[RMDB]
RNA sequence: GGGAACGACUCGAGUAGAGUCGAAAAUUUGACUCGUGAAUUUUUUAACAUGUGAAUUUUGACAAUCUUCUCCGUGGAAGCACCUCCUCUUCAUCGCUUCCAUUCAUUAACGAGAACCACCUGCCCCAAGUGUCUUCAGAUUCGUCUGAAGACACUUAAAAGAAACAACAACAACAAC
Reactivity to DMS in 0.01 (KOAc 150mM, MgCl2 10mM, bicine 150mM(pH8.5), 24C), signal-to-noise 2, nucleotides 027 to 126: u040u020u000g000a070c010u000c020g000u010g020a060a000u000u050u000u080u020u030a090a100c090a040u000g000u000g010a060a040u000u010u000u020g000a220c180a030a060u020c090u000u000c020u000c030c110g000u010g020g000a030a080g040c040a090c130c050u000c060c020u000c030u040u000c120a070u010c140g030c050u000u020c030c000a030u010u010c030a060u030u010a050a080c070g000a050g000a090a110c080c010a020c090c000u010g000c000c010c010c040
Reactivity to 2A3 in 0.01 (KOAc 150mM, MgCl2 10mM, bicine 150mM(pH8.5), 24C), signal-to-noise 3, nucleotides 027 to 126: u080u030u100g070a010c010u000c060g010u060g080a100a120u080u050u060u080u070u180a190a040c070a070u080g080u040g120a110a070u060u050u060u120g080a090c040a060a050u010c030u070u000c010u000c030c040g020u030g010g030a030a000g000c010a030c000c020u080c030c010u100c030u100u100c120a170u140c070g010c010u000u000c000c000a000u020u000c020a020u000u070a070a020c050g010a010g000a040a010c020c000a020c010c020u050g000c000c000c000c000